This 177-nucleotide RNA was probed chemically with 2A3 and DMS. Source: RMDB library OK2TRN, as collected in RNAgym. DMS adducts were read by reverse transcription with MarathonRT.
RNA sequence: GGGAACGACUCGAGUAGAGUCGAAAAGUCCUGGGCAUAGCAGGCCUAGCAGAGUUGGGAAGAGCACGCUCUCUGCUCCUUGGAGGUGCCUCUGCCUCUCCCGCCUUCCAGCUGCAGGACACGAGGGGGUGGUUCUAAGAUUCGUCUUAGAACCACCAAAAGAAACAACAACAACAAC
Reactivity to 2A3 in 0.01 (KOAc 150mM, MgCl2 10mM, bicine 150mM(pH8.5), 24C), signal-to-noise 1, nucleotides 027 to 126: g050u020c000c000u000g010g060g000c050a110u070a130g020c050a020g060g100c020c030u070a060g020c000a020g050a010g070u170u180g100g040g020a120a070g020a010g000c000a030c090g250c030u010c010u000c010u010g050c040u180c050c000u050u130g000g010a020g040g000u120g000c020c010u040c000u040g050c000c000u020c010u040c020c030c000g020c030c010u050u000c000c040a010g000c000u170g010c030a020g000g000a010c020a020c090g110a100g020g000g000
Reactivity to DMS in 0.01 (KOAc 150mM, MgCl2 10mM, bicine 150mM(pH8.5), 24C), signal-to-noise 1, nucleotides 027 to 126: g000u020c030c010u000g020g000g020c040a090u010a180g010c160a050g000g000c060c130u020a060g010c090a070g000a080g020u000u000g020g020g000a070a040g000a070g020c030a030c070g010c020u000c000u000c080u000g000c050u000c100c100u000u010g020g000a020g020g020u000g000c120c020u000c020u000g020c020c000u000c040u000c000c040c070g010c050c030u000u020c020c060a100g020c060u000g030c000a030g000g000a030c040a260c090g010a110g000g030g040